[RMDB]
This 177-nucleotide RNA was probed chemically with DMS. The data come from the RNA Mapping Database (RMDB), library VIROID. DMS (dimethyl sulfate) methylates the pairing face of unpaired adenines and cytosines.
RNA sequence: GGGAACGACUCGAGUAGAGUCGAAAAUUAGCCCAGACUUUUGAGAGAGUAGUUACCUCUCAGCCCCUCCACCUUGGGGUGCCCUAGUCGGACAAUGCAGUUCCGAUGGAAAGGCUAAGCACCUCGCCUUUCAUAAACCCUUCGGGGUUUAUGAAAGAAAAGAAACAACAACAACAAC
Reactivity to DMS in 0.01 (KOAc 150mM, MgCl2 10mM, bicine 150mM(pH8.5), 24C), signal-to-noise 1, nucleotides 027 to 126: u020u000a050g000c010c010c050a240g020a100c240u000u010u000u000g010a030g030a000g020a100g030u000a140g000u010u010a140c140c000u000c000u020c000a040g000c010c000c000c000u000c050c040a130c300c160u000u010g000g000g030g030u000g000c010c020c010u040a100g030u000c000g010g000a040c070a130a070u020g000c300a220g000u030u000c020c000g000a050u000g020g010a130a070a030g000g000c300u000a090a110g030c050a030c040c030u000c000g040c240
Description: Values cover nucleotides 27 to 126.